RNA sequence: GGGAACGACUCGAGUAGAGUCGAAAACUUCCAUGGGCUGCUCACUCCAAUUCUGAUGGAGAGGGCAUUUAUGACUCUGUCCGUUGGUUUGUUUUCUCACUGAAGAGGAACAUAGAUGCACCUGCUCAUAAGCUACUAUCUUCGGAUAGUAGCUUAUAAAAGAAACAACAACAACAAC
Reactivity to 2A3 in 0.01 (KOAc 150mM, MgCl2 10mM, bicine 150mM(pH8.5), 24C), signal-to-noise 2, nucleotides 027 to 126: c020u050u000c010c010a030u040g000g020g020c040u080g010c020u050c090a080c020u000c030c000a020a110u280u110c090u300g160a190u100g010g000a000g020a000g020g020g000c000a000u000u030u020a030u020g030a050c010u000c000u060g160u080c030c050g050u060u040g040g030u000u060u100g070u140u190u110u060c050u010c020a030c040u080g050a050a000g020a010g020g040a050a040c010a030u010a000g010a020u000g000c030a130c170c020u040g030c010u000c040
Reactivity to DMS in 0.01 (KOAc 150mM, MgCl2 10mM, bicine 150mM(pH8.5), 24C), signal-to-noise 5, nucleotides 027 to 126: c200u000u000c010c010a110u010g000g010g010c040u000g000c130u010c130a110c010u000c010c010a040a180u010u010c190u010g010a200u000g010g010a020g000a060g010g010g010c010a010u000u000u000a020u000g010a090c020u000c020u000g000u000c020c050g020u000u010g010g000u000u010u010g010u010u010u000u010c030u010c090a060c090u000g000a120a050g010a030g000g000a070a060c020a040u000a030g000a040u000g000c030a120c030c020u000g010c040u010c030

Structure probing data (2A3 and DMS) for a 177-nucleotide construct. For DMS, 7,505 sequencing reads were counted. 2A3 adducts were read by reverse transcription with SuperScript II with manganese. For DMS the reverse transcriptase was MarathonRT.